Overview:
Chemical mapping of a 177-nucleotide RNA with DMS. Reactivities are given for positions 27 through 126.
RNA sequence: GGGAACGACUCGAGUAGAGUCGAAAAUCAAUGUGCUUGGAAUGGCGGAGUUAAGCGAUGAAGAUAGAAAGCUGGUUCAUCGCGCAAGGAAAAUCCGGAAUUUUCUUUCACAACCUUUCUAUGUUUAUAUAAUAGCGACUUUCGAGUCGCUAUUAUAAAAAGAAACAACAACAACAAC
Reactivity to DMS in 0.01 (KOAc 150mM, MgCl2 10mM, bicine 150mM(pH8.5), 24C), signal-to-noise 1, nucleotides 027 to 126: u000c100a060a090u010g040u000g000c050u000u000g010g000a040a050u010g000g040c040g000g010a120g010u000u010a070a230g020c000g020a020u000g000a040a010g000a190u040a040g000a080a090a120g020c090u000g030g000u000u010c000a010u000c020g010c010g010c180a050a060g000g000a140a080a060a080u000c020c120g000g010a120a100u000u000u000u000c000u000u000u000c020a010c080a120a100c070c080u000u000u010c030u000a060u020g000u010u000u010a120
Notes: Source: RMDB library OK2TST, as collected in RNAgym.